The record gives the reactivity of an RNA of 177 nucleotides to 2A3.
The reactions ran in a buffer of 150 mM KOAc, 10 mM MgCl2 and 150 mM bicine (pH 8.5), at 24 C.
It was measured as part of the RMDB library OK2TRN.
RNA sequence: GGGAACGACUCGAGUAGAGUCGAAAACGACGGGCGGGACAACGUCAUGUCCAGGGUCUACAGGGAGGGUACUUAACAUCUUCUGGGUAAUUAAGAUUCCUAGGGUACUCAGGGUUCUUAGGGCCAGGCCCACUGCAGUAUUCGUACUGCAGUGGGCAAAAGAAACAACAACAACAAC
Reactivity to 2A3 in 0.01 (KOAc 150mM, MgCl2 10mM, bicine 150mM(pH8.5), 24C), signal-to-noise 1, nucleotides 027 to 126: c070g140a030c000g060g010g130c160g100g060g000a010c010a110a040c060g240u270c110a050u140g010u010c020c020a060g040g010g000u050c060u170a080c180a050g060g090g060a220g070g000g020u000a000c000u090u090a060a060c000a180u100c040u160u040c010u040g070g000g020u020a150a000u160u030a040a040g050a130u020u140c000c000u000a000g030g030g030u080a170c050u020c080a000g000g000g000u100u000c020u000u000a000g010g010g000c010c000a030g010